[RMDB]
RNA sequence: GGGAACGACUCGAGUAGAGUCGAAAAGAUGUUCCAGGUGGGUUCACAUCCCCAACCCGCGGGCCGGCUACUCUUCUUUCCCUUCUCUCGUCUUCCUCGGUCAACCUCCGGAGUUCCUCUUCCUCCUUGUUACCAUUAUCUUCGGAUAAUGGUAACAAAAAGAAACAACAACAACAAC
Reactivity to DMS in 0.01 (KOAc 150mM, MgCl2 10mM, bicine 150mM(pH8.5), 24C), signal-to-noise 2, nucleotides 027 to 126: g010a080u010g010u010u000c020c020a100g030g030u010g020g010g030u000u000c100a080c090a210u000c040c000c000c100a110a080c050c000c050g040c060g010g020g030c050c040g020g000c050u010a010c050u000c020u000u010c040u000u010u000c040c010c020u000u000c050u000c050u000c080g000u010c020u000u000c020c010u000c020g020g010u010c050a120a100c110c020u000c000c010g010g010a100g020u000u000c020c010u000c050u010u000c000c010u020c060c060u010